[RMDB]
RNA sequence: GGGAACGACUCGAGUAGAGUCGAAAAAAAAAGAUAUGGACCAGAGAGGCCAUCGAUCUAAGCUCCCCACCAGAACUCGGAAACGAGUUCUGAGGCUUAGGGAGGCUGGUUGGUCCUAAGUCAAAAAGGAUGGUUAUAUGUUCGCAUAUAACCAUCCAAAAGAAACAACAACAACAAC
Reactivity to DMS in 0.01 (KOAc 150mM, MgCl2 10mM, bicine 150mM(pH8.5), 24C), signal-to-noise 2, nucleotides 027 to 126: a000a050a060a110a140g000a010u000a190u000g000g010a010c000c010a060g010a190g010a240g040g010c000c000a260u000c150g020a060u020c000u000a000a010g020c090u000c090c050c020c070a300c120c010a000g000a020a000c010u000c000g010g000a050a010a100c010g010a020g010u000u000c000u000g010a050g040g000c010u010u000a000g000g020g030a030g010g010c010u000g020g000u010u010g010g000u000c000c000u000a010a130g010u000c030a040a090a080a160a070